This 207-nucleotide RNA was probed chemically with DMS. Source: RMDB library RNAMAK, as collected in RNAgym. The reactions ran in a buffer of 150 mM KOAc, 10 mM MgCl2 and 150 mM bicine (pH 8.5), at 24 C.
RNA sequence: GGGAACGACUCGAGUAGAGUCGAAAAGGGGUCGAGACAUGGUCCCAACUAUCAUGGACGUCCAUCAGACCGACGAUCUACACUGAAGCCUCCACGGUGUAGGGAGGUCUGAUGGACGUCCAUGAUAGUGGGACCAACAGCUCGACGGAGGCACCCACUAAACACUAAUGUUCGCAUUAGUGUUUAGAAAAGAAACAACAACAACAAC
Reactivity to DMS in 0.01 (KOAc 150mM, MgCl2 10mM, bicine 150mM(pH8.5), 24C), signal-to-noise 2, nucleotides 027 to 156: g000g020g000g020u000c000g020a040g010a100c090a300u020g040g020u020c010c010c130a110a100c030u000a010u000c020a020u000g020g020a050c010g080u000c000c010a060u010c010a020g030a050c000c000g000a160c170g000a060u000c000u000a000c000a040c000u000g010a080a130g010c010c030u000c000c030a300c040g030g020u000g030u020a010g010g000g020a030g020g060u000c010u000g000a030u000g030g000a000c000g000u000c000c010a000u000g000a000u000a000g090u000g020g050g010a020c030c010a010a020c010a140g030c020u000c010g030a020c000g030g010a070g040g020c030a280c000c010c000a250